[RMDB]
RNA sequence: GGGAACGACUCGAGUAGAGUCGAAAAGAGCCGACAGAGAAGUCGGGAAGCGACGAGAGAGAAUAGAAGACAUUGGAAUUCGAGAUACUGCCACAAAAUGACAGACGUCGCCAUAUUCUCUGAGAAGAGUAGCGAUUAUGUUCGCAUAAUCGCUACUAAAAGAAACAACAACAACAAC
Reactivity to DMS in 0.01 (KOAc 150mM, MgCl2 10mM, bicine 150mM(pH8.5), 24C), signal-to-noise 4, nucleotides 027 to 126: g020a180g000c050c010g000a010c010a130g010a200g000a070a100g030u000c010g000g000g020a160a140g000c030g010a020c020g020a280g000a130g020a160g000a030a020u040a070g000a080a060g010a090c130a160u040u020g000g000a150a080u010u000c040g000a080g000a130u030a100c020u000g020c040c010a020c100a070a020a110a200u010g000a100c020a040g000a190c040g000u000c000g010c030c060a100u020a070u000u000c000u000c000u000g000a100g010a120a060g010
Reactivity to 2A3 in 0.01 (KOAc 150mM, MgCl2 10mM, bicine 150mM(pH8.5), 24C), signal-to-noise 5, nucleotides 027 to 126: g040a010g100c020c000g010a010c000a000g290a010g030a200a020g030u010c010g000g000g040a010a010g040c010g010a010c030g010a010g010a000g000a000g020a130a050u070a090g160a170a010g030a040c060a100u140u300g100g110a070a100u070u020c040g000a010g000a050u090a110c000u020g000c000c010a050c040a060a130a020a060u100g040a030c010a030g030a010c000g010u040c000g000c010c000a020u040a080u070u010c010u000c010u030g060a080g020a150a020g040